[RMDB]
RNA sequence: GGGAACGACUCGAGUAGAGUCGAAAAGAGCUGAAGUUCGCUUCAGCUCAAAACAAUACUGUACACGCAGUACAGAAAAACAAAAACAAAAAUGCGUAAAAAAAAGAUAGCAGUUCGCUGCUAUCAACUAUUCCUUUCGGUUCGCCGAAAGGAAUAGAAAAGAAACAACAACAACAAC
Reactivity to 2A3 in 0.01 (KOAc 150mM, MgCl2 10mM, bicine 150mM(pH8.5), 24C), signal-to-noise 1, nucleotides 027 to 126: g010a000g020c000u000g010a020a000g010u020u150c150g000c070u030u010c010a000g050c000u010c010a000a000a020a000c010a020a030u130a150c000u010g000u000a030c040a000c030g010c010a040g010u010a010c000a010g050a010a100a050a000a010c060a000a040a010a000a000c010a010a110a050a040a070u100g020c030g050u200a160a040a020a010a000a000a050a150g000a010u000a020g000c010a000g020u020u110c140g070c120u010g000c010u000a000u010c000a000a010

Chemical mapping of a 177-nucleotide RNA with 2A3. Values cover nucleotides 27 to 126. Source: RMDB library M2PK50, as collected in RNAgym. For 2A3, 1,228 sequencing reads were counted. The reactions ran in a buffer of 150 mM KOAc, 10 mM MgCl2 and 150 mM bicine (pH 8.5), at 24 C. Values are in units of 0.01, from 0 to 300, in steps of 10.